RNA sequence: GGGAACGACUCGAGUAGAGUCGAAAAGAUAUGGAUCUUCACUUGAACCCGAGGAUCUCGGAAACGAGGGAGGGUAAAGUGAGAGAUCCUAAGUCAAAACUCUUGGAUACUUCGGUAUCCAAGAGAAUCAUAUCAUUUUCUUCGGAAAAUGAUAUGAAAAAGAAACAACAACAACAAC
Reactivity to 2A3 in 0.01 (KOAc 150mM, MgCl2 10mM, bicine 150mM(pH8.5), 24C), signal-to-noise 3, nucleotides 027 to 126: g030a020u080a040u170g000g000a010u000c000u020u010c010a010c020u040u020g160a300a300c000c010c010g030a240g010g000a010u000c000u000c010g030g040a120a050a050c010g000a010g010g010g010a020g030g000g000u010a040a010a020g020u020g030a170g040a020g000a070u000c000c000u000a100a010g050u010c030a010a030a060a300c010u000c000u010u000g000g020a010u000a010c000u010u070c300g070g010u010a000u000c010c000a000a000g000a000g010a000a010

This 177-nucleotide RNA was probed chemically with 2A3. Source: RMDB library TTRDEL, as collected in RNAgym. The 2A3 profile rests on 7,420 reads. The reactions ran in a buffer of 150 mM KOAc, 10 mM MgCl2 and 150 mM bicine (pH 8.5), at 24 C.